[RMDB]
RNA sequence: GGGAACGACUCGAGUAGAGUCGAAAAGCCUGUACUACAACCCAGGUGACAAGACGUGCGGUCGCUCGAUCGUGGCCGUGAGCAAGGGAAAGGUCUACCACGAUUACGCCAAGGCUGUCCGCCUCGACAAGACGCGAUGCGGCCCACAGGGAAAGUGCAAACAAGCGCUAUUCGUAGCGCUUGUUUGAAAAGAAACAACAACAACAAC
Reactivity to 2A3 in 0.01 (KOAc 150mM, MgCl2 10mM, bicine 150mM(pH8.5), 24C), signal-to-noise 1, nucleotides 027 to 156: g000c000c010u000g090u120a080c050u050a070c050a120a030c090c000c000a020g010g140u050g030a020c070a070a030g020a010c070g020u010g090c070g040g000u020c010g040c040u070c070g060a040u010c010g040u000g010g130c000c000g110u120g020a070g000c070a080a090g140g000g000a160a150a110g000g080u000c010u110a210c070c000a030c010g010a020u070u120a050c050g000c040c020a060a010g030g030c020u020g080u040c000c020g000c010c010u040c010g050a040c050a060a100g130a130c070g020c010g030a050u060g040c020g000g000c000c000c000a020c010a000g000g010g000a150a090a000g100u090g020